An RNA of 207 nucleotides, treated with 2A3 and read out base by base. High 2A3 reactivity points to a flexible backbone, as in loops and unpaired stretches. Conditions: 150 mM KOAc, 10 mM MgCl2 and 150 mM bicine (pH 8.5), 24 C. Source: RMDB library RSTRND, as collected in RNAgym.
RNA sequence: GGGAACGACUCGAGUAGAGUCGAAAAGGGCAACAUCAUCGAAUUGCUGGAAACCCCUAAAGCUCUUGGUACCAACCUGCAUGGGAAAUCGUGCGGGGGCCCACUCCGGGGAGGUUAUAAUCCAAGAGAUGCAACAAUGGGCAAUCAGCAGCGAAGAGUCAAUAGCUGAGUUCGCUCAGCUAUUGACAAAAGAAACAACAACAACAAC
Reactivity to 2A3 in 0.01 (KOAc 150mM, MgCl2 10mM, bicine 150mM(pH8.5), 24C), signal-to-noise 1, nucleotides 027 to 156: g050g020g020c060a120a070c010a190u080c040a000u030c030g030a110a230u170u080g010c010u000g050g030a080a080a090c010c010c000c000u030a040a080a050g000c000u030c000u000u000g020g000u000a010c000c000a010a020c010c010u000g020c000a000u010g070g000g090a100a130a050u090c000g010u000g000c010g000g000g040g000g000c010c010c000a040c040u140c150c110g010g000g020g010a070g010g010u010u010a060u020a150a020u000c000c010a000a010g000a000g000a000u010g030c210a280a020c000a000a050u020g000g000g030c030a070a070u040c000a030g020c010a000g020c030g020a040a020g010a010